An RNA of 177 nucleotides, treated with 2A3 and DMS and read out base by base. Reactivities are rounded to 0.1 and cut off at 0 and 3. Conditions: 150 mM KOAc, 10 mM MgCl2 and 150 mM bicine (pH 8.5), 24 C. The 2A3 profile rests on 339 reads.

RNA sequence: GGGAACGACUCGAGUAGAGUCGAAAAGAAACAGGUAAGGUUGAUGCAGUGAUGGAUGGAGACAUUGGACCAUUUAUCGAAUCAUAUUUAAGACAGACAAUGUCGCACGAUUAAUAUAUAUUUUAAAGACUAGAGGGGAAUUCGUUCCCCUCUAGUCAAAAGAAACAACAACAACAAC
Reactivity to 2A3 in 0.01 (KOAc 150mM, MgCl2 10mM, bicine 150mM(pH8.5), 24C), signal-to-noise 2, nucleotides 027 to 126: g010a000a060a000c010a020g070g210u150a180a000g000g000u040u000g020a060u140g110c250a180g080u010g110a000u000g010g000a000u000g080g160a180g000a020c140a130u150u070g030g000a030c000c060a030u000u000u030a010u000c010g060a150a000u270c110a070u050a270u130u210u020a070a050g030a000c070a000g100a060c060a000a300u130g000u000c030g000c070a000c070g140a010u000u300a180a000u140a000u010a050u000a030u050u000u000u280a180a070a000
Reactivity to DMS in 0.01 (KOAc 150mM, MgCl2 10mM, bicine 150mM(pH8.5), 24C), signal-to-noise 2, nucleotides 027 to 126: g010a040a090a110c090a030g020g010u010a060a080g030g040u000u000g000a070u020g000c060a170g010u010g000a030u000g000g000a070u000g000g010a130g000a020c060a130u030u000g000g040a130c060c020a000u000u000u030a050u010c100g010a120a030u050c060a020u040a050u040u020u020a120a100g020a090c090a040g000a100c110a080a040u000g030u020c010g020c110a100c110g000a080u030u030a110a010u050a050u010a110u040a110u000u000u020u000a040a070a240